[RMDB]
RNA sequence: GGGAACGACUCGAGUAGAGUCGAAAAGUACUGCAAGACCAGCGACGGACGGGUAGUACCUGAGUCCCAGUGCCAGAUGGAGACCAAGCCUCUGGCCAUCCACCCCUGUGGGGACAAAAACUGUCCCCCUAAGCCACCCAUUCGUGGGUGGCUUAGGAAAAGAAACAACAACAACAAC
Reactivity to DMS in 0.01 (KOAc 150mM, MgCl2 10mM, bicine 150mM(pH8.5), 24C), signal-to-noise 2, nucleotides 027 to 126: g000u010a000c000u000g030c000a030a090g000a150c030c020a080g000c280g000a280c190g020g020a110c040g000g030g000u000a010g000u000a020c010c000u000g020a230g020u010c000c010c000a150g010u010g020c000c000a010g010a030u000g010g010a050g030a160c250c180a100a170g000c010c000u000c030u000g010g000c000c040a110u000c000c050a270c020c010c010c090u000g000u000g010g000g050g000a000c010a030a140a040a150a120c140u000g000u000c000c000c010

Structure probing data (DMS) for a 177-nucleotide construct.
The data come from the RNA Mapping Database (RMDB), library OK2TRN.
Reactivities are given for positions 27 through 126.
Conditions: 150 mM KOAc, 10 mM MgCl2 and 150 mM bicine (pH 8.5), 24 C.